[RMDB]
RNA sequence: GGGAACGACUCGAGUAGAGUCGAAAAGAUAUGGAGCUAUGGGACAUGAUGCGCGUUCGGAAACGAACGCCAUCAACAGCCCAUAAGCUCCUAAGUCAAAAGAUGAGAUCCUUCGGGAUCUCAUCAACGAAAGUGCAUUGUUCGCAAUGCACUUUCGAAAAGAAACAACAACAACAAC
Reactivity to DMS in 0.01 (KOAc 150mM, MgCl2 10mM, bicine 150mM(pH8.5), 24C), signal-to-noise 2, nucleotides 027 to 126: g020a000u000a090u030g000g020a000g010c000u000a010u000g000g030g020a050c120a160u000g000a000u000g010c300g000c010g010u010u000c010g010g000a020a000a030c020g020a010a010c000g010c000c000a000u000c000a100a080c230a240g000c000c000c000a000u010a020a110g000c010u000c010c020u000a000a090g000u000c010a160a120a100a170g000a010u010g000a000g010a000u000c000c000u000u000c300g040g000g010a010u000c000u000c000a000u000c000a070a140
Reactivity to 2A3 in 0.01 (KOAc 150mM, MgCl2 10mM, bicine 150mM(pH8.5), 24C), signal-to-noise 1, nucleotides 027 to 126: g010a010u010a000u060g000g000a010g000c000u000a010u030g000g030g000a050c170a300u300g000a070u000g050c150g010c000g160u000u000c000g030g000a000a000a030c000g000a000a000c020g030c000c000a000u010c010a010a000c050a010g000c030c010c000a010u010a000a030g010c000u000c000c000u000a000a010g010u010c020a100a090a120a120g000a000u000g010a010g010a000u000c010c000u070u180c300g090g040g000a000u000c000u000c000a010u030c000a000a000
Chemical mapping of a 177-nucleotide RNA with DMS and 2A3. The 2A3 profile rests on 3,419 reads. Reactivities are given for positions 27 through 126. The RNA was probed in 150 mM KOAc, 10 mM MgCl2 and 150 mM bicine (pH 8.5) at 24 C.